Overview: This 177-nucleotide RNA was probed chemically with 2A3. The reactions ran in a buffer of 150 mM KOAc, 10 mM MgCl2 and 150 mM bicine (pH 8.5), at 24 C. The 2A3 profile rests on 1,756 reads. Values cover nucleotides 27 to 126.

[RMDB]
RNA sequence: GGGAACGACUCGAGUAGAGUCGAAAACAGCGGAGGGCACCCGUGGCGAGUGAAUGUCAUAGACGCCCGGGCCCACACCGUUGGCGAAGCCGAUCGCGUUCAGGUCGUCGAGCACCUCCAUGUGUGAGCAAUACAGACGAUUCGUCGUCUGUAUUGCAAAAGAAACAACAACAACAAC
Reactivity to 2A3 in 0.01 (KOAc 150mM, MgCl2 10mM, bicine 150mM(pH8.5), 24C), signal-to-noise 2, nucleotides 027 to 126: c010a000g000c010g060g000a030g000g050g000c100a150c050c020c080g060u220g010g000c010g000a070g010u110g090a220a140u270g090u230c050a040u060a150g170a100c000g000c000c000c000g030g010g050c040c000c000a020c000a000c010c010g010u010u010g000g010c010g020a030a030g010c010c010g010a040u010c010g000c070g070u100u070c040a070g000g010u020c010g000u030c000g020a010g000c030a060c030c000u040c070c000a170u190g050u000g020u000g080a060

2A3 adducts were read by reverse transcription with SuperScript II with manganese.